[RMDB]
RNA sequence: GGGAACGACUCGAGUAGAGUCGAAAAAGUGUAUGAAGUACAUAGAGUGUCGGCAAGCUCUAUAUAUGGACACUUACGAAGGGUUUUGGUUGUUUUGUAUCUCAAGCCGACUUUGAGUAUUUGAGGAAAAAGACUUACGCCUUCGGGCGUAAGUCAACUUGUAUAAUAGGUUCGCCUAUUAUACAAGAAAAGAAACAACAACAACAAC
Reactivity to DMS in 0.01 (KOAc 150mM, MgCl2 10mM, bicine 150mM(pH8.5), 24C), signal-to-noise 1, nucleotides 027 to 156: a050g010u010g030u020a260u020g000a160a260g000u000a050c000a070u010a060g000a020g070u000g010u000c030g010g000c070a150a300g030c020u000c000u000a000u000a050u010a020u000g000g010a000c000a010c000u000u010a200c030g010a130a120g010g020g000u000u000u000u010g020g000u000u010g000u000u000u000u010g010u000a110u000c020u010c010a030a120g000c020c010g020a040c050u010u000u000g000a140g020u000a060u000u000u000g000a090g000g000a040a070a070a160a150g010a000c000u000u010a010c000g000c000c000u000u000c300g050g020g000c010g030u000a000a000g000u000c000a020a010
Reactivity to 2A3 in 0.01 (KOAc 150mM, MgCl2 10mM, bicine 150mM(pH8.5), 24C), signal-to-noise 3, nucleotides 027 to 156: a000g070u080g000u040a210u110g040a030a000g010u010a010c000a000u020a020g010a000g010u060g040u070c080g030g010c070a130a080g010c030u000c000u000a010u000a000u000a010u030g020g000a000c000a000c020u050u070a030c090g110a080a080g100g020g000u030u090u140u200g070g000u040u000g000u020u030u010u030g030u030a090u040c000u000c020a020a020g020c000c010g010a030c010u060u090u100g060a030g020u090a080u090u110u110g070a080g000g020a020a090a010a050a030g000a010c000u000u000a000c000g000c000c020u030u050c170g070g000g020c000g000u000a000a000g000u000c000a000a000
Structure probing data (DMS and 2A3) for a 207-nucleotide construct. Conditions: 150 mM KOAc, 10 mM MgCl2 and 150 mM bicine (pH 8.5), 24 C. DMS adducts were read by reverse transcription with MarathonRT.